An RNA of 177 nucleotides, treated with DMS and 2A3 and read out base by base. Source: RMDB libraries RFM100 and RFMREP, as collected in RNAgym.

RNA sequence: GGGAACGACUCGAGUAGAGUCGAAAAUUAUCUUGUAUUUCGUCUGCAAAUGGCUAGAUGGUAAGAAGUAGACCGACUGACUAGCCUAUAAACACCCGUUAAAUCGCUAAGAUACGUCAAAAAAGCCAAUCUGUGUCAAAUUCGUUUGACACAGAUUAAAAGAAACAACAACAACAAC
Reactivity to DMS in 0.01 (KOAc 150mM, MgCl2 10mM, bicine 150mM(pH8.5), 24C), signal-to-noise 5, nucleotides 027 to 126: u000u020a030u010c020u000u000g000u020a020u000u000u000c040g020u010c020u010g000c080a110a090a130u030g000g010c000u000a010g000a090u020g000g020u000a040a090g020a100a140g010u030a110g000a060c090c110g010a090c050u000g010a100c030u010a030g010c000c010u010a090u020a070a110a110c100a100c030c030c010g010u020u000a030a010a040u010c080g030c070u010a060a060g000a080u000a030c130g000u020c110a000a020a040a070a080a070g020c070c090
Reactivity to 2A3 in 0.01 (KOAc 150mM, MgCl2 10mM, bicine 150mM(pH8.5), 24C), signal-to-noise 5, nucleotides 027 to 126: u110u050a050u060c010u010u110g060u060a090u030u130u080c040g050u020c050u050g040c040a030a110a140u070g010g000c000u010a030g010a080u110g060g010u110a150a100g070a160a040g140u100a020g060a080c050c010g040a070c040u030g020a020c000u010a000g000c000c010u030a040u050a020a040a000c040a040c000c020c000g000u000u060a030a150a040u060c020g010c090u060a020a000g010a020u040a050c020g010u000c030a040a080a030a050a010a050g040c010c000